[RMDB]
RNA sequence: GGGAACGACUCGAGUAGAGUCGAAAAAGAGGCUGCAAUCUCGGCACUUUGGGAGGCCAAGGCAGGCGGCUGGGAGGUGGAGGUUGUAGCGAGCCGAGAUCACGCCACUGCACUUCGGCCUGGGCAACCUGACCACUUCUUUCGAGAAGUGGUCAGGAAAAGAAACAACAACAACAAC
Reactivity to DMS in 0.01 (KOAc 150mM, MgCl2 10mM, bicine 150mM(pH8.5), 24C), signal-to-noise 1, nucleotides 027 to 126: a030g000a150g040g100c020u020g060c130a160a080u010c000u000c030g010g020c100a100c060u000u000u000g000g000g000a040g030g000c100c000a030a000g010g000c000a040g000g000c200g000g010c010u020g000g010g000a070g000g080u050g000g030a300g000g020u030u000g060u070a050g030c300g010a100g030c000c000g000a300g000a050u040c000a040c100g000c010c020a110c030u000g000c040a030c070u010u000c100g000g000c010c010u010g000g000g000c140a030a070
Reactivity to 2A3 in 0.01 (KOAc 150mM, MgCl2 10mM, bicine 150mM(pH8.5), 24C), signal-to-noise 2, nucleotides 027 to 126: a010g140a030g020g010c060u090g000c020a030a110u030c020u010c000g090g010c010a090c110u120u130u020g030g080g000a010g060g020c000c000a010a000g010g020c030a000g000g070c080g000g000c070u100g050g060g100a140g040g010u060g000g000a020g000g040u070u040g030u070a040g000c000g000a020g010c000c000g000a010g010a050u080c000a000c060g020c030c000a030c010u010g040c020a050c230u030u070c100g000g000c000c000u050g000g000g000c010a040a050
Overview: Structure probing data (DMS and 2A3) for a 177-nucleotide construct. The data come from the RNA Mapping Database (RMDB), library OK1LIB. DMS adducts were read by reverse transcription with MarathonRT. For 2A3, 1,120 sequencing reads were counted. The RNA was probed in 150 mM KOAc, 10 mM MgCl2 and 150 mM bicine (pH 8.5) at 24 C.